[RMDB]
RNA sequence: GGGAACGACUCGAGUAGAGUCGAAAAGAAUGGCGACGUGCGAUCGCGGCAUCGCGGCGUCGACGAUGUCUCCACUUGCACGGUCGCGCGCAUUUCGAGAUUGCGCACGGACUGAUGCGUCGGCGCACUUUUACUUUUACUUCGGUAAAAGUAAAAGAAAAGAAACAACAACAACAAC
Reactivity to 2A3 in 0.01 (KOAc 150mM, MgCl2 10mM, bicine 150mM(pH8.5), 24C), signal-to-noise 9, nucleotides 027 to 126: g080a060a110u160g060g020c010g010a020c080g120u270g110c090g120a240u050c040g000c000g020g000c010a000u000c000g010c030g170g000c010g020u020c000g000a010c000g000a010u020g010u000c010u010c030c000a030c040u040u050g000c010a000c000g030g000u020c010g000c000g000c000g000c020a050u070u170u220c220g070a160g050a200u060u080g000c000g000c000a010c020g020g010a010c020u040g060a300u030g050c020g010u010c000g000g010c010g010c000a010
Reactivity to DMS in 0.01 (KOAc 150mM, MgCl2 10mM, bicine 150mM(pH8.5), 24C), signal-to-noise 9, nucleotides 027 to 126: g000a090a100u000g020g030c000g010a020c030g010u010g010c120g000a080u000c040g020c060g010g000c010a020u000c000g010c070g010g020c010g010u000c000g000a010c000g010a010u000g010u000c010u000c010c020a070c060u010u000g010c000a030c010g000g000u000c010g010c020g010c010g010c000a020u000u010u010c260g010a180g010a060u000u000g010c000g010c000a040c010g010g000a020c010u000g000a140u000g010c020g010u000c000g010g000c000g020c010a300